[RMDB]
RNA sequence: GGGAACGACUCGAGUAGAGUCGAAAAGAUAUGGAGCUAGAACUACGCUGGUUCGAAGAACAAGCUCGGAAACGAGCUUGGGAGAAUCAGCGCUAGCUCCUAAGUCAAAGGUGCGUUCGCGCACCAAGAAAGUAAUAAACUUCGGUUUAUUACUUUCAAAAGAAACAACAACAACAAC
Reactivity to DMS in 0.01 (KOAc 150mM, MgCl2 10mM, bicine 150mM(pH8.5), 24C), signal-to-noise 5, nucleotides 027 to 126: g010a040u010a300u010g010g000a000g020c000u000a000g000a100a060c140u020a300c020g010c000u000g000g000u000u000c010g000a090a160g010a110a240c010a000a010g010c000u010c000g000g010a100a070a160c010g000a000g010c010u000u000g000g000g010a110g000a030a010u000c000a010g010c010g000c000u000a010g000c000u010c000c000u000a010a040g000u000c050a060a130a130g000g020u000g010c010g020u010u010c210g030c030g020c020a010c000c000a040a040
Reactivity to 2A3 in 0.01 (KOAc 150mM, MgCl2 10mM, bicine 150mM(pH8.5), 24C), signal-to-noise 4, nucleotides 027 to 126: g030a010u060a060u160g010g000a010g010c000u020a000g010a130a120c160u160a040c300g010c000u010g000g040u020u010c050g120a300a030g010a040a020c000a000a010g000c000u000c010g010g020a080a090a020c010g000a000g000c000u010u000g000g000g000a030g000a000a010u000c010a000g000c000g010c000u000a000g010c000u010c000c000u000a010a000g000u010c050a050a060a120g000g000u010g010c000g030u030u060c180g010c000g000c120a000c000c000a000a020